[RMDB]
RNA sequence: GGGAACGACUCGAGUAGAGUCGAAAAUUGAAGUACAAGCUACUGAAAAUUUAACUCAUGGUUAUUUUAUUGUGGAAGCAAAUGACGAAGCAGAAGCUAAACAAUUUUUAACAGAAGCAGAUAUUAGCAUUAGAUUGCCCUUCGGGGCAAUCUAAUGAAAAGAAACAACAACAACAAC
Reactivity to DMS in 0.01 (KOAc 150mM, MgCl2 10mM, bicine 150mM(pH8.5), 24C), signal-to-noise 1, nucleotides 027 to 126: u000u000g010a100a030g030u130a060c050a170a100g010c150u000a000c010u000g010a000a140a000a020u000u000u000a100a050c070u030c060a050u050g000g000u000u000a010u010u030u000u000a040u030u000g010u000g060g010a270a120g030c040a000a050a150u010g050a190c210g030a040a150g010c000a000g010a200a270g000c010u000a090a080a000c080a000a040u000u000u010u030u000a010a140c000a030g000a060a140g040c080a030g010a080u000a170u000u000a040g030
Reactivity to 2A3 in 0.01 (KOAc 150mM, MgCl2 10mM, bicine 150mM(pH8.5), 24C), signal-to-noise 1, nucleotides 027 to 126: u000u000g000a000a040g010u000a000c060a260a000g050c060u010a010c000u010g180a070a210a000a000u110u000u000a140a070c060u070c040a040u150g140g000u000u150a010u010u080u140u070a060u030u030g000u000g060g060a030a100g010c010a230a060a000u110g050a110c080g180a100a000g100c000a000g130a230a010g020c030u020a010a010a010c000a000a000u080u030u000u000u030a070a000c040a000g110a280a000g010c100a010g060a130u080a140u060u300a060g000
Structure probing data (DMS and 2A3) for a 177-nucleotide construct.
It was measured as part of the RMDB library OK1LIB.
2A3 adducts were read by reverse transcription with SuperScript II with manganese.
2A3 is a SHAPE reagent: it acylates the 2'-hydroxyl of flexible nucleotides of all four kinds.
Reactivities are given for positions 27 through 126.